The data come from the RNA Mapping Database (RMDB), libraries RFM100 and RFMREP. Structure probing data (DMS and 2A3) for a 177-nucleotide construct. Conditions: 150 mM KOAc, 10 mM MgCl2 and 150 mM bicine (pH 8.5), 24 C. 2A3 adducts were read by reverse transcription with SuperScript II with manganese.

[RMDB]
RNA sequence: GGGAACGACUCGAGUAGAGUCGAAAAUUGACUGAACCUGUCUUCUAACAGUAGUUAAUUGCCAGUGUUUCAAACAAGAUUUGAAAUACGAGUUUCCCAGAAUAAUUUUCAUUUGGACAGGAUAGGAUAAUGCAUCAUUAUUCGUAAUGAUGCAUUAAAAAGAAACAACAACAACAAC
Reactivity to DMS in 0.01 (KOAc 150mM, MgCl2 10mM, bicine 150mM(pH8.5), 24C), signal-to-noise 9, nucleotides 027 to 126: u000u010g010a020c010u000g010a130a110c020c000u000g000u000c010u010u010c160u020a080a110c150a100g010u010a020g010u010u000a010a020u000u000g010c070c070a300g020u000g010u000u000u000c000a000a000a020c020a150a130g010a300u000u000u000g000a010a010a010u000a010c000g010a300g010u000u000u000c000c000c000a160g010a080a060u030a050a070u020u020u020u010c090a150u010u000u010g010g000a020c020a010g000g010a210u030a070g010g010a180
Reactivity to 2A3 in 0.01 (KOAc 150mM, MgCl2 10mM, bicine 150mM(pH8.5), 24C), signal-to-noise 9, nucleotides 027 to 126: u010u010g010a000c010u030g030a040a080c010c000u000g000u000c000u120u050c080u160a150a070c030a100g120u100a010g000u040u020a010a020u020u010g020c030c030a020g000u000g010u000u010u000c010a010a010a010c070a200a090g080a300u000u000u000g000a000a000a000u010a000c010g020a030g040u010u020u000c000c000c010a010g070a020a080u240a020a050u040u110u110u140c070a070u040u050u200g020g000a010c010a010g000g030a030u110a050g080g000a030